RNA sequence: GGGAACGACUCGAGUAGAGUCGAAAAGAUAUGGACAUUGACCCAGCCUAGAGGGUCGAAGAACUCGGAAACGAGGGAGACCCGAUAGGCUGCAAUGUCCUAAGUCAAACGCGACUUCGGUCGCGAAGCUAAUACAUUAGUUCGCUAAUGUAUUAGCAAAAGAAACAACAACAACAAC
Reactivity to 2A3 in 0.01 (KOAc 150mM, MgCl2 10mM, bicine 150mM(pH8.5), 24C), signal-to-noise 6, nucleotides 027 to 126: g030a020u080a050u140g000g010a000c000a000u010u100g040a140c050c060c060a000g000c000c000u010a010g010a020g020g010g010u010c010g010a090a050g020a030a020c010u010c010g010g030a080a070a060c010g000a010g000g020g020a030g000a000c000c000c000g010a030u000a010g000g000c000u000g000c010a000a000u000g000u000c000c000u010a090a020g020u000c030a090a050a070c010g000c000g000a000c000u060u120c300g130g000u000c000g000c000g020a030a010
Reactivity to DMS in 0.01 (KOAc 150mM, MgCl2 10mM, bicine 150mM(pH8.5), 24C), signal-to-noise 8, nucleotides 027 to 126: g000a040u000a300u000g000g000a020c010a000u000u000g000a220c180c300c060a030g010c000c000u000a010g010a300g000g000g020u000c000g000a070a100g000a150a220c000u000c000g010g010a130a090a170c000g000a010g010g010g000a080g000a010c000c000c000g000a170u000a000g000g010c000u000g000c000a000a000u000g000u000c000c000u000a010a050g000u000c030a080a090a190c020g010c000g000a010c000u000u000c160g020g010u000c000g010c000g010a030a070

The record gives the reactivity of an RNA of 177 nucleotides to 2A3 and DMS.